Chemical mapping of a 177-nucleotide RNA with DMS and 2A3. The 2A3 profile rests on 41,971 reads. Conditions: 150 mM KOAc, 10 mM MgCl2 and 150 mM bicine (pH 8.5), 24 C. Values are in units of 0.01, from 0 to 300, in steps of 10. 2A3 adducts were read by reverse transcription with SuperScript II with manganese.
RNA sequence: GGGAACGACUCGAGUAGAGUCGAAAACAUCCAGGUGUAGGUUUCCACAUCGUAGGUGAGGAAGAGCCUUUCGGUGCGAGGAUGCGAGCCGAUGGGGAAGAACUGGAUCUCCUUCCACCAGUUGGAGGGUAUUUAAACUAUUCGUAGUUUAAAUACCAAAAGAAACAACAACAACAAC
Reactivity to DMS in 0.01 (KOAc 150mM, MgCl2 10mM, bicine 150mM(pH8.5), 24C), signal-to-noise 9, nucleotides 027 to 126: c180a070u000c010c010a070g010g010u010g020u000a090g020g010u010u000u000c010c020a110c030a030u000c040g020u010a070g030g040u000g010a120g010g000a050a040g000a210g000c010c010u000u000u000c020g020g020u000g010c060g010a150g010g010a100u000g010c040g010a230g010c020c010g000a040u000g010g010g000g010a090a100g000a060a090c030u010g000g000a060u000c090u000c020c010u000u000c010c010a090c040c080a130g010u000u000g000g010a070g010
Reactivity to 2A3 in 0.01 (KOAc 150mM, MgCl2 10mM, bicine 150mM(pH8.5), 24C), signal-to-noise 9, nucleotides 027 to 126: c020a020u020c010c010a020g020g030u110g070u140a100g030g090u040u070u000c040c010a090c010a080u050c050g160u150a060g020g050u050g050a080g050g070a070a050g030a040g090c010c000u060u110u080c020g000g020u050g030c030g010a070g140g050a100u160g080c070g060a020g020c010c010g030a040u060g020g000g000g040a050a100g030a080a050c030u030g010g030a030u010c030u030c030c000u030u030c010c020a070c020c030a070g040u120u040g060g030a060g030